[RMDB]
RNA sequence: GGGAACGACUCGAGUAGAGUCGAAAACGAGCAACAACAGACUGUGUCGCUCGAGAGCAUGUCGAGUGACCGAAGGCAAAGAGUCUUAGAAAUCACCUUGAGGGAAAAGGUCGAGUCUGGGGCAAACGCCACUGACUCAGUUCGCUGAGUCAGUGGCAAAAGAAACAACAACAACAAC
Reactivity to 2A3 in 0.01 (KOAc 150mM, MgCl2 10mM, bicine 150mM(pH8.5), 24C), signal-to-noise 7, nucleotides 027 to 126: c060g030a030g080c030a020a110c010a040a020c020a070g170a070c070u080g060u060g010u170c000g020c000u000c010g010a030g000a020g070c240a190u300g040u110c000g000a000g000u020g010a010c000c010g050a040a040g070g010c040a080a080a090g130a050g010u000c000u010u070a040g020a060a150a080u040c000a010c010c000u030u040g050a140g010g150g010a020a100a000a000g030g020u050c080g010a000g010u000c000u010g000g000g040g000c030a120a050a030c070
Reactivity to DMS in 0.01 (KOAc 150mM, MgCl2 10mM, bicine 150mM(pH8.5), 24C), signal-to-noise 2, nucleotides 027 to 126: c020g070a140g020c120a010a000c150a040a160c200a070g020a150c040u000g000u000g040u000c000g050c000u000c000g000a000g000a220g000c300a030u020g130u010c000g000a000g010u000g000a000c000c020g050a120a010g050g000c030a180a100a200g000a110g000u000c040u000u000a140g000a090a010a170u060c140a100c000c050u040u030g000a170g000g000g000a120a070a110a010g000g030u000c070g000a010g000u020c040u000g080g020g000g060c020a120a070a010c200